[RMDB]
RNA sequence: GGGAACGACUCGAGUAGAGUCGAAAAGAAAGAAGCUUCGGAUCUUCUAGAGCAGAAUCGGCUUCUGCAGGACCAGUUAAGGGUGGCCCUGGGCAGAGAACAGAGUGCCCGGGAGGGCUAUGUGCUGCUUUAACCGUGGAUUCGUCCACGGUUAAAGAAAAGAAACAACAACAACAAC
Reactivity to 2A3 in 0.01 (KOAc 150mM, MgCl2 10mM, bicine 150mM(pH8.5), 24C), signal-to-noise 1, nucleotides 027 to 126: g050a010a160a000g020a050a000g000c030u150u140c070g170g000a130u060c010u100u070c020u080a050g000a040g150c030a010g050a060a080u080c070g110g000c060u020u000c000u030g010c030a050g040g000a030c010c010a070g010u100u140a040a070g110g030g040u050g020g040c000c000c000u040g020g020g030c020a050g090a020g010a160a020c030a050g180a050g300u070g020c030c000c000g020g000g000a080g020g020g000c040u020a020u110g090u080g000c000u020g000
Reactivity to DMS in 0.01 (KOAc 150mM, MgCl2 10mM, bicine 150mM(pH8.5), 24C), signal-to-noise 2, nucleotides 027 to 126: g030a130a150a070g000a030a050g020c050u000u020c120g010g020a070u000c020u010u000c030u000a140g020a100g020c070a030g000a090a040u010c090g030g010c080u000u010c010u020g000c070a080g000g010a110c040c010a130g000u010u010a070a060g000g020g030u000g000g020c040c010c020u010g040g010g010c020a060g000a130g000a090a110c180a120g000a140g000u000g000c020c010c000g000g040g020a060g020g000g000c040u000a030u000g020u010g000c030u010g010

Overview:
Source: RMDB library OK2TST, as collected in RNAgym. An RNA of 177 nucleotides, treated with 2A3 and DMS and read out base by base. For DMS, 1,576 sequencing reads were counted. DMS adducts were read by reverse transcription with MarathonRT. 2A3 adducts were read by reverse transcription with SuperScript II with manganese.